[RMDB]
Chemical mapping of a 177-nucleotide RNA with 2A3 and DMS. DMS adducts were read by reverse transcription with MarathonRT. The RNA was probed in 150 mM KOAc, 10 mM MgCl2 and 150 mM bicine (pH 8.5) at 24 C.
RNA sequence: GGGAACGACUCGAGUAGAGUCGAAAAGUUGCUGAGCAAUAGUUUACUGCGCCCGCAGCGGCAUUGCCAGCAAGCCACGGCGCCACAACACCUGUGAUUAGUAGGCAGAUCGCCAGUACCGCAGCGAAUUUUAAAUCGGUUUCGACCGAUUUAAAAUAAAAGAAACAACAACAACAAC
Reactivity to 2A3 in 0.01 (KOAc 150mM, MgCl2 10mM, bicine 150mM(pH8.5), 24C), signal-to-noise 2, nucleotides 027 to 126: g050u030u020g000c010u020g040a050g100c010a010a040u060a130g010u020u140u170a140c020u020g010c030g090c100c120c110g000c050a000g010c020g030g010c030a050u000u050g000c010c000a000g000c000a010a010g010c020c000a030c020g010g000c050g070c000c030a060c020a090a040c040a050c010c010u050g010u010g050a110u060u100a040g080u030a020g030g000c020a030g050a240u090c040g010c030c000a000g020u040a040c010c030g000c010a020g020c040g070a020
Reactivity to DMS in 0.01 (KOAc 150mM, MgCl2 10mM, bicine 150mM(pH8.5), 24C), signal-to-noise 7, nucleotides 027 to 126: g010u000u000g010c010u000g000a180g010c010a010a020u000a130g010u000u000u010a080c030u000g010c020g020c220c230c300g010c000a020g020c300g000g000c020a030u000u000g000c010c010a030g010c020a030a050g010c040c020a050c120g000g010c050g010c040c040a040c060a060a070c090a100c080c020u010g010u000g010a080u010u000a070g020u010a070g010g010c020a080g010a100u010c080g000c020c020a070g010u010a070c050c030g000c070a040g010c080g020a070